[RMDB]
This 177-nucleotide RNA was probed chemically with 2A3 and DMS. The data come from the RNA Mapping Database (RMDB), library OK2TST. The reactions ran in a buffer of 150 mM KOAc, 10 mM MgCl2 and 150 mM bicine (pH 8.5), at 24 C. DMS adducts were read by reverse transcription with MarathonRT. For 2A3, 10,686 sequencing reads were counted. The DMS profile rests on 13,708 reads.

RNA sequence: GGGAACGACUCGAGUAGAGUCGAAAAUGACAUGAGCCUCUCUCCUGACGUGAGCCUCUCUCCUGACGGGCCUGGGCUCGGACUCUGUCCACCCAUCCUCCUCGAAAGACAGCUGGGACGCCGUCUCAUCUUUUCUAAUUUUCGAAUUAGAAAAGAUAAAAGAAACAACAACAACAAC
Reactivity to 2A3 in 0.01 (KOAc 150mM, MgCl2 10mM, bicine 150mM(pH8.5), 24C), signal-to-noise 4, nucleotides 027 to 126: u120g030a020c050a080u110g050a040g020c000c000u020c000u000c000u010c010c030u040g040a030c050g080u060g040a020g020c000c000u030c000u000c010u010c010c020u050g020a040c050g000g020g010c000c030u060g020g020g000c060u080c110g020g000a080c110u140c090u280g030u000c000c010a030c020c000c010a040u040c010c000u000c000c000u030c030g070a080a050a010g050a010c030a030g020c020u050g000g020g020a010c020g040c030c020g030u010c020u010c010
Reactivity to DMS in 0.01 (KOAc 150mM, MgCl2 10mM, bicine 150mM(pH8.5), 24C), signal-to-noise 8, nucleotides 027 to 126: u010g010a080c100a080u010g010a120g010c050c020u000c050u000c030u000c020c030u000g000a090c110g020u010g000a100g010c050c020u000c060u000c040u000c030c020u000g000a110c120g010g000g010c080c060u000g000g010g010c080u010c120g020g010a050c040u010c120u000g010u000c020c020a130c030c010c010a090u000c030c020u000c030c020u000c050g010a060a090a080g000a070c070a050g010c040u000g010g000g010a070c070g010c050c040g010u000c030u010c100